[RMDB]
The data come from the RNA Mapping Database (RMDB), library OK3TST.
The record gives the reactivity of an RNA of 207 nucleotides to 2A3.
2A3 adducts were read by reverse transcription with SuperScript II with manganese.
Conditions: 150 mM KOAc, 10 mM MgCl2 and 150 mM bicine (pH 8.5), 24 C.
The 2A3 profile rests on 703 reads.
RNA sequence: GGGAACGACUCGAGUAGAGUCGAAAAGGCAGGUUGUGAUGCCCUUGGUCUGGACAGGGAACCAGGAGGAGGAGCAGACGACUGGGGAGAGUGGGAGGCCAGUGGUGUCUGUGGAUAUGUGGCCAGGUUCAGUGGGAAGCUGAAGGAUGAGCAGACAAUCCUCGCAAAAUUUCGAUUUUGCGAGGAUAAAAGAAACAACAACAACAAC
Reactivity to 2A3 in 0.01 (KOAc 150mM, MgCl2 10mM, bicine 150mM(pH8.5), 24C), signal-to-noise 1, nucleotides 027 to 156: g050g020c020a020g010g100u040u060g060u090g080a140u130g010c030c000c110u070u070g140g020u050c000u010g010g030a010c040a080g070g000g070a100a040c040c000a030g020g030a090g000g060a010g000g020a070g000c040a020g030a040c020g020a010c050u060g000g000g000g030a190g010a010g070u120g000g000g000a060g000g030c000c000a010g030u050g070g060u000g040u030c020u030g000u000g040g000a020u030a020u230g090u080g020g000c000c000a000g080g010u000u000c000a010g000u030g030g070g010a130a020g000c010u030g040a080a000g030g010a060u100g050a050g000c040a000g000a010c010a020